[RMDB]
RNA sequence: GGGAACGACUCGAGUAGAGUCGAAAAACGGUGAUCGACGACGUCUUGGUCGGGCCCAGGGUGGGCGACGAGCCUGCGUAGCCGGGGCCGUCGGCCACGCAUUGCAUCAACUUCGAUGCUUGCGCGGCAUUGACGACUGUUUCGACAGUCGUCAAUGAAAAGAAACAACAACAACAAC
Reactivity to 2A3 in 0.01 (KOAc 150mM, MgCl2 10mM, bicine 150mM(pH8.5), 24C), signal-to-noise 3, nucleotides 027 to 126: a000c120g040g120u150g070a170u060c020g020a010c010g020a030c040g060u050c030u030u040g000g000u010c000g010g010g000c000c030c030a030g200g040g020u060g000g000g010c020g020a060c060g000a060g020c010c020u050g080c020g070u090a070g040c020c020g020g000g030g030c010c030g020u010c030g040g000c020c010a000c000g010c010a030u030u220g030c000a000u000c020a040a190c100u300u220c200g000a000u000g000c000u010u000g020c080g000c020g040g000
Reactivity to DMS in 0.01 (KOAc 150mM, MgCl2 10mM, bicine 150mM(pH8.5), 24C), signal-to-noise 3, nucleotides 027 to 126: a060c100g030g000u000g010a130u000c010g010a050c000g000a130c150g010u000c040u010u010g010g020u000c010g000g000g020c000c010c000a160g010g000g030u000g010g010g010c020g010a030c070g010a150g000c000c010u010g020c060g000u010a140g000c110c040g020g000g010g010c020c010g000u000c050g010g000c000c000a020c000g010c000a020u020u000g000c010a000u000c000a120a170c300u010u010c170g000a010u000g000c010u010u010g010c010g020c080g000g010
The record gives the reactivity of an RNA of 177 nucleotides to 2A3 and DMS. DMS (dimethyl sulfate) methylates the pairing face of unpaired adenines and cytosines. The RNA was probed in 150 mM KOAc, 10 mM MgCl2 and 150 mM bicine (pH 8.5) at 24 C. Source: RMDB library OK2TRN, as collected in RNAgym. For 2A3, 3,224 sequencing reads were counted. For 2A3 the reverse transcriptase was SuperScript II with manganese.